[RMDB]
RNA sequence: GGGAACGACUCGAGUAGAGUCGAAAAGAUAUGGACUGAAUUUCUGGCCGAAGAGACUUGCUCGGAAACGAGCAAGAGGAGGAACUACCAGGUUCAGUCCUAAGUCAAAGCGCUCUUCGGAGCGCAACGCUAUCUCCGUGUUCGCACGGAGAUAGCGAAAAGAAACAACAACAACAAC
Reactivity to 2A3 in 0.01 (KOAc 150mM, MgCl2 10mM, bicine 150mM(pH8.5), 24C), signal-to-noise 1, nucleotides 027 to 126: g010a000u010a020u050g000g010a000c010u030g000a050a010u070u300u300c040u020g020g000c090c290g300a300a080g010a000g000a020c010u000u010g000c000u010c040g000g050a020a000a000c000g010a010g090c020a000a000g000a000g000g040a000g000g080a190a210c300u160a060c280c030a010g000g000u060u040c000a000g010u000c010c040u000a010a010g000u040c010a050a090a000g050c000g020c000u040c000u050u140c300g100g000a000g030c030g000c030a000a000